RNA sequence: GGGAACGACUCGAGUAGAGUCGAAAAUACUGUAGACGGCGGCUAUCAGAACACCUUCCAGUGGUACAAAGACGGCGUUGCUCUGUCCGGUCGUACUGGUGCUUCCUUCACGAAGUCCAACGCUGUGUACGCGUCAUGACUUCGGUCAUGACGCGUAAAAAGAAACAACAACAACAAC
Reactivity to DMS in 0.01 (KOAc 150mM, MgCl2 10mM, bicine 150mM(pH8.5), 24C), signal-to-noise 1, nucleotides 027 to 126: u010a130c100u000g030u010a080g000a090c100g030g000c060g010g040c000u000a120u020c010a070g030a050a050c100a030c070c050u010u000c070c090a090g000u040g000g050u000a140c130a040a110a160g010a070c100g020g000c130g020u000u000g000c070u010c070u010g010u020c000c100g020g000u000c080g000u000a080c050u010g020g000u000g000c080u020u000c010c020u000u050c150a170c160g000a070a040g010u000c040c040a050a000c020g000c010u000g010u010g020
An RNA of 177 nucleotides, treated with DMS and read out base by base.
For DMS, 762 sequencing reads were counted.
The reactions ran in a buffer of 150 mM KOAc, 10 mM MgCl2 and 150 mM bicine (pH 8.5), at 24 C.